[RMDB]
RNA sequence: GGGAACGACUCGAGUAGAGUCGAAAAAACAUUGAAACCCUUUAUGCAGGGAGAGGGUUGUAAUGAAGUCUGUAGCUUUUUGCUUCUCUCAAGGCCAGAGACGCUCAUUCAGCAAAUUCAACAAUCAAUUGCUUAAGGCAACCUAGUAAGUGGCCAAUACCUAUGCUCCAUUCGUGGAGCAUAGGUAAAAAGAAACAACAACAACAAC
Reactivity to DMS in 0.01 (KOAc 150mM, MgCl2 10mM, bicine 150mM(pH8.5), 24C), signal-to-noise 1, nucleotides 027 to 156: a080a060c060a090u000u010g020a040a070a070c010c010c010u000u010u000a080u010g060c090a070g010g040g010a100g000a040g000g010g000u000u000g000u010a040a060u010g010a060a130g010u010c030u010g020u010a110g010c100u000u000u010u010u000g010c040u000u000c010u010c000u000c070a060a060g040g020c030c000a050g000a060g000a040c100g000c070u010c070a050u010u010c020a100g000c020a040a080a150u000u000c040a100a070c130a090a120u000c110a070a140u000u000g000c000u010u010a110a160g040g000c000a020a010c020c000u010a180g010u000a090a020g000u010g030g020c040c000a100a300
Reactivity to 2A3 in 0.01 (KOAc 150mM, MgCl2 10mM, bicine 150mM(pH8.5), 24C), signal-to-noise 1, nucleotides 027 to 156: a000a000c050a070u090u110g070a150a090a060c050c010c000u100u080u030a280u160g000c000a010g060g030g060a010g010a040g000g000g050u070u090g000u090a070a170u090g060a090a000g000u060c050u060g100u220a020g070c050u060u070u000u050u070g020c030u050u000c000u000c000u000c070a000a230g010g010c020c000a030g050a000g010a060c090g140c000u050c060a090u170u030c060a000g000c000a000a000a150u200u160c040a010a070c040a070a170u170c010a040a140u020u010g000c000u060u060a000a020g030g030c000a040a000c040c010u020a020g020u060a100a200g000u020g050g000c000c070a000a000
Notes: Chemical mapping of a 207-nucleotide RNA with DMS and 2A3. The DMS profile rests on 1,805 reads. DMS adducts were read by reverse transcription with MarathonRT. It was measured as part of the RMDB library OK3TST. As a SHAPE reagent, 2A3 marks flexible, mostly unpaired nucleotides at the ribose 2'-OH.